The record gives the reactivity of an RNA of 177 nucleotides to DMS and 2A3. For DMS, 2,309 sequencing reads were counted. 2A3 adducts were read by reverse transcription with SuperScript II with manganese. Values cover nucleotides 27 to 126. The 2A3 profile rests on 5,973 reads. The RNA was probed in 150 mM KOAc, 10 mM MgCl2 and 150 mM bicine (pH 8.5) at 24 C.

[RMDB]
RNA sequence: GGGAACGACUCGAGUAGAGUCGAAAAGAUAUGGAGGGUGGAAUCAGCGAAGAACGCUGGUGCUCCCCACCUAUUUCGGAAACGAAAUAGAGGCACCAGCGGGAGCUGUGGCCACCCUCCUAAGUCAGGUAGUAGUAUACUUCGGUAUACUACUACCAAAAGAAACAACAACAACAAC
Reactivity to DMS in 0.01 (KOAc 150mM, MgCl2 10mM, bicine 150mM(pH8.5), 24C), signal-to-noise 3, nucleotides 027 to 126: g000a010u010a300u020g000g010a010g040g030g020u000g000g010a180a080u020c000a010g030c000g010a150a290g010a130a230c000g000c000u000g000g020u010g020c020u000c190c000c000c150a300c110c000u000a000u010u000u010c000g000g000a180a130a220c000g020a000a010a000u000a000g000a160g000g000c000a000c000c010a000g010c010g010g000g000a060g020c000u000g000u000g020g010c000c000a000c000c000c000u010c000c000u000a010a070g000u000c070a120
Reactivity to 2A3 in 0.01 (KOAc 150mM, MgCl2 10mM, bicine 150mM(pH8.5), 24C), signal-to-noise 2, nucleotides 027 to 126: g020a030u100a030u180g000g000a020g000g020g020u020g000g050a020a080u100c010a000g080c000g180a300a040g050a060a030c000g000c000u000g000g010u010g020c000u250c120c030c000c000a030c010c000u010a030u000u000u000c000g020g040a090a100a070c020g020a000a000a020u000a030g010a030g030g000c000a010c010c000a010g040c080g000g000g000a010g000c020u000g010u100g050g000c040c000a010c000c000c010u010c000c000u010a030a010g040u030c050a010